RNA sequence: GGGAACGACUCGAGUAGAGUCGAAAAGGAAGGUGCGGAUAACGUUUUACCCAGCCAAAUGGCGGAGAACGAUCAUUCCCCGGGAGCUGCGGCGUAUAACAAGCAUUUUCCCUCGGGAAGGUACGGAGGCAGAAAUCUUCCCUUCCCGGCGAUGGGCCGGAUAUUCACCGUUCGCGGUGAAUAUCCGAAAAGAAACAACAACAACAAC
Reactivity to 2A3 in 0.01 (KOAc 150mM, MgCl2 10mM, bicine 150mM(pH8.5), 24C), signal-to-noise 3, nucleotides 027 to 156: g030g000a040a030g040g010u010g030c020g000g050a090u090a140a040c020g020u030u000u050u100a080c020c020c020a010g000c000c010a110a100a190u300g000g020c140g060g020a020g000a060a050c060g050a070u130c040a140u060u080c030c000c020c010g000g020g040a140g020c030u020g020c060g060g000c040g030u080a080u020a270a050c070a040a040g020c000a000u030u000u000u020c000c000c000u010c000g000g000g010a000a000g000g010u060a070c170g010g000a000g010g000c060a060g240a100a050a010u000c000u000u020c000c000c000u000u000c000c000c000g000g000c060g060a130u130g010g080g030c050
Reactivity to DMS in 0.01 (KOAc 150mM, MgCl2 10mM, bicine 150mM(pH8.5), 24C), signal-to-noise 1, nucleotides 027 to 156: g020g030a040a030g000g000u010g010c030g000g020a110u010a110a130c110g000u000u000u020u000a030c020c010c000a060g000c000c040a110a150a110u010g000g000c000g010g010a000g020a010a040c040g000a220u000c080a300u000u000c010c000c000c020g010g000g000a050g020c010u000g010c020g070g010c010g030u000a070u030a060a050c050a120a210g010c010a020u000u000u010u000c000c000c020u000c040g010g000g000a020a000g030g060u000a100c110g020g010a060g030g000c010a160g010a050a100a130u000c000u000u000c120c000c010u000u000c000c000c010g070g030c100g000a120u000g030g000g000c140